[RMDB]
RNA sequence: GGGAACGACUCGAGUAGAGUCGAAAAAGGCAUUAUGAGGCAUAUUCUGCGACUCGUGUGGCGACGUUAACGCUCAGUUAAAUAUAACUGCAAAAAAUACUAAUUCUUACGCUGUAGCAGCCUAAACACCUGCUCGCGUGACUUCUAGCAGAUUGCUCUGAUAUGAUGCGUUCGCGCAUCAUAUCAGAAAAGAAACAACAACAACAAC
Reactivity to 2A3 in 0.01 (KOAc 150mM, MgCl2 10mM, bicine 150mM(pH8.5), 24C), signal-to-noise 1, nucleotides 027 to 156: a000g160g000c080a140u180u110a110u300g080a050g040g000c090a030u070a110u090u030c010u000g000c000g060a040c010u010c050g000u000g000u010g000g010c020g000a040c090g030u060u040a000a000c000g000c030u000c000a000g000u010u030a040a300a130u230a130u090a080a000c000u000g040c060a060a060a060a070a060a060u050a040c040u060a070a120u020u120c070u090u070a000c020g000c050u030g000u000a000g000c000a000g010c010c000u010a010a010a010c010a000c000c010u000g020c000u000c000g020c000g000u000g000a000c020u040u120c060u110a010g000c010a000g000a060u000u080g000c000u000
Description
Chemical mapping of a 207-nucleotide RNA with 2A3. For 2A3 the reverse transcriptase was SuperScript II with manganese. The RNA was probed in 150 mM KOAc, 10 mM MgCl2 and 150 mM bicine (pH 8.5) at 24 C. The data come from the RNA Mapping Database (RMDB), library ARCHII.